[RMDB]
RNA sequence: GGGAACGACUCGAGUAGAGUCGAAAAGAACUUUGUAAUUAUGUCUACAAAACUAAACUUGCAUACUAUGGAUGCCCAAAUACAAGAACAAAUGUUUUCCAAGUUUUGGGACAAAUCUUCAAUUGUAAAGGUCUGUGCAUAUCGUGUUAAAAGAAGAAGUAGUAGGGUCAUUCGUGACCCUACUACUAAAAGAAACAACAACAACAAC
Reactivity to 2A3 in 0.01 (KOAc 150mM, MgCl2 10mM, bicine 150mM(pH8.5), 24C), signal-to-noise 1, nucleotides 027 to 156: g100a130a060c110u090u030u000g060u180a050a060u010u090a230u260g000u000c000u070a240c010a000a000a060a060c040u250a100a090a070c000u000u140g000c030a010u030a160c000u040a000u070g100g000a010u080g060c130c000c000a020a110a000u280a000c010a040a020g010a040a010c040a000a270a070u110g000u010u090u090u000c100c030a120a030g040u030u060u060u000g000g000g000a010c000a000a150a080u070c060u210u050c130a050a000u020u050g000u060a030a090a050g000g070u040c060u040g050u040g000c110a030u100a000u230c030g010u130g010u220u100a050a100a000a000g220a020a020g060a170